Chemical mapping of a 207-nucleotide RNA with DMS and 2A3. The reactions ran in a buffer of 150 mM KOAc, 10 mM MgCl2 and 150 mM bicine (pH 8.5), at 24 C. 2A3 adducts were read by reverse transcription with SuperScript II with manganese. Values are in units of 0.01, from 0 to 300, in steps of 10.

RNA sequence: GGGAACGACUCGAGUAGAGUCGAAAAGGAAGACCUUCGGGUCUUCCAAAAAUCCUAAGUCUCGAGGAAAGUGACAUGCUCCUAUCGGAAACGAUAGCGAGCAACAGCACUUUCUACCCACCGAGAUAUGGAAAAAAGUUUGUGUUCGCACAAACAACAGAUGUAUUAAGUUCGCUUAAUACAUCUGAAAAGAAACAACAACAACAAC
Reactivity to DMS in 0.01 (KOAc 150mM, MgCl2 10mM, bicine 150mM(pH8.5), 24C), signal-to-noise 4, nucleotides 027 to 156: g010g010a050a010g010a040c000c010u000u010c300g080g070g020u000c010u000u000c000c010a010a030a070a060a120u000c010c010u000a060a260g020u000c000u000c000g000a140g020g000a010a000a020g010u000g010a060c060a300u000g010c000u000c010c000u000a000u000c000g000g000a150a110a290c030g020a010u000a010g010c170g000a010g030c000a000a010c040a100g020c000a030c000u010u010u000c020u010a020c020c000c010a300c170c000g010a020g020a020u000a230u000g000g010a010a070a100a100a150a190g020u000u000u010g020u000g030u010u000c210g050c020a020c000a010a030a040c000a090a290
Reactivity to 2A3 in 0.01 (KOAc 150mM, MgCl2 10mM, bicine 150mM(pH8.5), 24C), signal-to-noise 3, nucleotides 027 to 156: g010g000a000a000g020a000c020c010u040u070c200g000g000g010u010c000u000u000c000c000a000a010a000a000a000u010c000c000u010a040a010g050u000c000u000c010g030a030g010g020a020a000a010g010u000g040a140c030a100u030g000c010u000c000c000u000a000u000c000g040g020a100a040a030c020g000a010u000a000g030c110g030a000g000c000a000a010c020a000g000c000a000c000u000u000u000c000u010a030c020c010c010a070c020c020g000a010g010a010u040a090u070g040g020a060a070a070a080a010a050g010u010u000u000g010u000g010u030u080c210g050c080a000c000a000a000a000c000a010a010